[RMDB]
This 207-nucleotide RNA was probed chemically with 2A3 and DMS.
RNA sequence: GGGAACGACUCGAGUAGAGUCGAAAAGUAAACAUAUACAAGGAAGUCAUGACCAAGGAGGGACUCUCCAUCACCAAGAUAAGCAGUUAUGAAGGUAACGACUCGCAGCUUAUCAAGAUUCCACUGCUGAUAGCUUACGGGAACAAGAACCCGCUGGCUACUACAGAGGAUUCGUCCUCUGUAGUAGAAAAGAAACAACAACAACAAC
Reactivity to 2A3 in 0.01 (KOAc 150mM, MgCl2 10mM, bicine 150mM(pH8.5), 24C), signal-to-noise 5, nucleotides 027 to 156: g040u070a040a110a020c050a060u150a010u060a200c050a070a030g030g000a020a030g020u040c030a040u060g040a080c040c030a020a040g030g000a040g020g020g050a070c030u020c010u000c060c000a020u050c010a020c010c050a040a010g010a060u030a020a020g000c010a010g010u090u100a110u160g110a120a040g070g030u040a040a040c050g080a090c040u010c060g080c030a030g000c000u050u010a020u060c010a000a060g020a040u080u020c030c040a040c050u020g010c010u040g040a060u050a080g020c010u040u040a030c020g020g000g030a060a050c050a190a030g040a070a070c000c000c010g000c030u010g060g000
Reactivity to DMS in 0.01 (KOAc 150mM, MgCl2 10mM, bicine 150mM(pH8.5), 24C), signal-to-noise 3, nucleotides 027 to 156: g000u000a090a090a140c060a090u010a090u010a140c090a100a130g010g010a060a070g040u020c000a050u010g000a230c070c050a110a110g060g020a110g010g020g000a070c060u000c030u000c000c000a110u000c040a090c080c080a070a190g010a060u010a020a060g040c020a110g030u000u000a070u000g020a130a080g020g000u020a080a160c070g000a120c030u000c050g010c060a120g010c000u000u020a060u010c020a060a120g010a180u000u000c040c040a060c080u000g000c030u000g010a100u000a040g030c030u010u000a030c030g000g010g030a030a060c020a080a130g000a040a110c000c000c000g050c020u010g020g020
DMS adducts were read by reverse transcription with MarathonRT. High DMS reactivity at an A or C suggests that its Watson-Crick edge is free. The 2A3 profile rests on 3,585 reads. It was measured as part of the RMDB library OK3TST.